The record gives the reactivity of an RNA of 177 nucleotides to 2A3.
2A3 adducts were read by reverse transcription with SuperScript II with manganese.
2A3 is a SHAPE reagent: it acylates the 2'-hydroxyl of flexible nucleotides of all four kinds.
Conditions: 150 mM KOAc, 10 mM MgCl2 and 150 mM bicine (pH 8.5), 24 C.
[RMDB]
RNA sequence: GGGAACGACUCGAGUAGAGUCGAAAAGAAAGAAAGAAAGAAUGGUGGCUUGAUGAUCGCCUAUAUUCUCGCUGUCGCUUGCAUUACCAGCAUUGCCGUGGGUGGGCUUGUGGCAAUCGCCAAUUAAGGCAAAGCACUGAUUCGUCAGUGCUUUGCCAAAAGAAACAACAACAACAAC
Reactivity to 2A3 in 0.01 (KOAc 150mM, MgCl2 10mM, bicine 150mM(pH8.5), 24C), signal-to-noise 1, nucleotides 027 to 126: g130a000a130a000g190a000a070a010g060a000a000a000g030a020a000u150g080g040u000g000g060c050u080u010g110a080u160g000a060u300c120g010c040c040u000a000u000a000u280u000c120u050c000g000c000u000g020u110c000g000c000u000u060g000c000a030u070u140a120c000c040a000g180c060a070u000u080g170c000c000g030u050g000g000g100u140g060g040g000c050u030u000g010u000g010g000c000a050a090u120c030g000c000c030a130a160u130u170a220a000